The data come from the RNA Mapping Database (RMDB), library OK1LIB. The record gives the reactivity of an RNA of 177 nucleotides to DMS and 2A3. The DMS profile rests on 11,650 reads. The 2A3 profile rests on 4,221 reads. For 2A3 the reverse transcriptase was SuperScript II with manganese.
RNA sequence: GGGAACGACUCGAGUAGAGUCGAAAACGUGCAGCAGGCCGCGAUGGCCGUCAACGGCAGGGUGCCCACCGGCCAGUGGGCCCGGAUCCGGGUCAGCCGGUCCAGCAGGUCCGGCGUGCCAAGGGCGCUCAGUGAUACGGUUCGCCGUAUCACUGAGAAAAGAAACAACAACAACAAC
Reactivity to DMS in 0.01 (KOAc 150mM, MgCl2 10mM, bicine 150mM(pH8.5), 24C), signal-to-noise 5, nucleotides 027 to 126: c080g010u020g010c060a110g020c080a140g010g010c000c040g020c190g020a150u030g010g000c020c000g000u020c110a120a080c110g000g000c040a140g020g000g000u000g000c000c000c010a110c160c110g010g000c030c040a160g030u000g010g000g020c000c010c010g000g010a090u010c130c000g000g000g000u010c040a170g000c000c010g010g000u000c000c000a160g020c160a150g010g000u010c000c000g000g000c000g020u030g000c000c030a140a160g030g000g010c010g010
Reactivity to 2A3 in 0.01 (KOAc 150mM, MgCl2 10mM, bicine 150mM(pH8.5), 24C), signal-to-noise 3, nucleotides 027 to 126: c050g020u060g030c020a080g010c010a060g050g030c020c020g070c090g170a150u230g010g000c000c010g000u010c000a030a020c010g030g000c040a040g090g020g030u100g030c010c010c000a040c010c020g020g010c010c010a040g070u140g050g010g000c000c010c010g020g030a090u140c150c040g000g000g020u070c060a010g020c010c010g000g000u030c010c000a180g120c080a080g060g000u000c000c000g010g000c010g050u060g000c000c000a090a120g040g000g000c000g010